An RNA of 177 nucleotides, treated with 2A3 and DMS and read out base by base. The 2A3 profile rests on 783 reads.

RNA sequence: GGGAACGACUCGAGUAGAGUCGAAAAAGCCAUUUUGCAUUGAAACUCGGUAUCAGCAGAGUCAUCUCCUGAGAAAGACUUCUUUCUUAUUUAUACAAGAUUUCAGAGAACAUAGUGAAGCCCUCAACUCAUGACCUUAUUUCGAUAAGGUCAUGAGAAAAGAAACAACAACAACAAC
Reactivity to 2A3 in 0.01 (KOAc 150mM, MgCl2 10mM, bicine 150mM(pH8.5), 24C), signal-to-noise 1, nucleotides 027 to 126: a000g020c030c000a020u120u110u010u180g090c080a050u040u130g060a040a040a000c020u020c060g020g020u090a030u060c030a030g000c000a000g000a040g180u030c000a010u040c030u020c030c010u030g000a010g030a110a100a020g060a100c020u140u000c000u010u140u000c010u130u120a300u180u140u130a140u090a080c020a030a030g030a080u070u010u100c040a010g030a020g020a190a000c010a030u030a050g030u050g060a050a080g030c020c000c020u030c040a050a040
Reactivity to DMS in 0.01 (KOAc 150mM, MgCl2 10mM, bicine 150mM(pH8.5), 24C), signal-to-noise 2, nucleotides 027 to 126: a100g000c020c060a120u000u010u000u000g010c040a120u000u020g010a100a090a100c050u000c160g020g000u000a060u040c060a070g010c090a110g000a160g010u010c100a110u010c050u000c030c040u000g000a040g000a040a060a020g000a200c190u000u000c000u000u000u000c020u000u020a100u020u000u030a090u000a160c020a070a060g000a100u000u000u000c050a010g000a160g000a050a060c100a100u000a020g040u000g010a060a150g020c000c010c020u000c100a090a150
Source: RMDB library OK2TST, as collected in RNAgym.